[RMDB]
RNA sequence: GGGAACGACUCGAGUAGAGUCGAAAACGGAGACUGUUCGCAGUCUCCGAAAGGAGCGGGCUUUUGCGCUAAGGCCAUACGGACAGCCGGCUCCAAAGCCGAAAAUCCGGCGGUUCGCCGCCGGAAAGUGAAGAUAUAAGUUCGCUUAUAUCUUCACAAAAGAAACAACAACAACAAC
Reactivity to 2A3 in 0.01 (KOAc 150mM, MgCl2 10mM, bicine 150mM(pH8.5), 24C), signal-to-noise 5, nucleotides 027 to 126: c010g010g000a000g000a000c000u040g030u090u100c230g030c140a000g000u000c000u000c000c000g000a010a010a000g010g010a010g020c110g020g050g020c020u050u070u140u180g090c110g010c060u060a070a080g180g000c020c010a040u070a110c100g080g030a000c010a020g010c010c020g170g010c000u000c000c010a040a030a000g050c010c010g030a080a050a000a090u010c000c010g010g020c030g010g010u030u030c170g030c080c010g000c000c000g010g000a010a000a000
Reactivity to DMS in 0.01 (KOAc 150mM, MgCl2 10mM, bicine 150mM(pH8.5), 24C), signal-to-noise 4, nucleotides 027 to 126: c030g010g010a040g000a010c010u000g010u000u010c160g050c010a000g010u000c000u000c010c000g000a010a040a110g010g000a020g020c010g010g000g000c010u000u000u000u000g010c090g020c040u010a060a120g040g010c030c090a120u010a180c180g000g010a080c180a030g010c020c010g010g020c010u010c010c020a020a040a130g000c020c010g000a100a070a100a120u000c000c000g000g020c000g010g000u000u010c200g030c010c000g040c000c010g000g000a000a010a040